[RMDB]
RNA sequence: GGGAACGACUCGAGUAGAGUCGAAAAGAUAUGGAUGUAAUUAGGACAUGACUAGUGGUCGGAAACGACCGUAGUCAACAGCCUACUGUUACAUCCUAAGUCAAAGCUUAGCCUUCGGGCUAAGCAAGGAUAACAGGGUGUUCGCACCCUGUUAUCCAAAAGAAACAACAACAACAAC
Reactivity to DMS in 0.01 (KOAc 150mM, MgCl2 10mM, bicine 150mM(pH8.5), 24C), signal-to-noise 2, nucleotides 027 to 126: g000a020u010a300u000g000g000a000u010g000u020a000a030u020u010a030g060g010a100c190a270u010g000a000c000u010a020g030u050g070g040u000c000g010g010a050a070a180c000g000a000c020c000g000u010a000g000u000c040a010a100c240a180g000c050c040u000a080c300u000g020u000u010a000c000a010u010c000c000u000a020a020g010u000c000a080a080a200g020c000u000u010a010g000c000c000u000u000c280g040g010g010c010u010a000a010g020c000a080a020
Reactivity to 2A3 in 0.01 (KOAc 150mM, MgCl2 10mM, bicine 150mM(pH8.5), 24C), signal-to-noise 2, nucleotides 027 to 126: g000a010u050a020u100g000g000a000u000g000u010a050a040u140u300a060g080g000a070c210a300u170g000a010c020u000a050g300u030g300g000u020c030g020g000a060a020a040c010g000a000c020c010g000u000a010g000u000c010a030a040c030a020g120c000c010u080a070c060u110g020u060u010a000c000a010u030c000c000u010a060a000g030u060c060a000a120a140g000c020u000u000a000g000c000c060u020u060c300g170g000g000c020u000a000a000g000c010a000a020
This 177-nucleotide RNA was probed chemically with DMS and 2A3. The data come from the RNA Mapping Database (RMDB), library TTRDES. For DMS, 1,412 sequencing reads were counted. For DMS the reverse transcriptase was MarathonRT.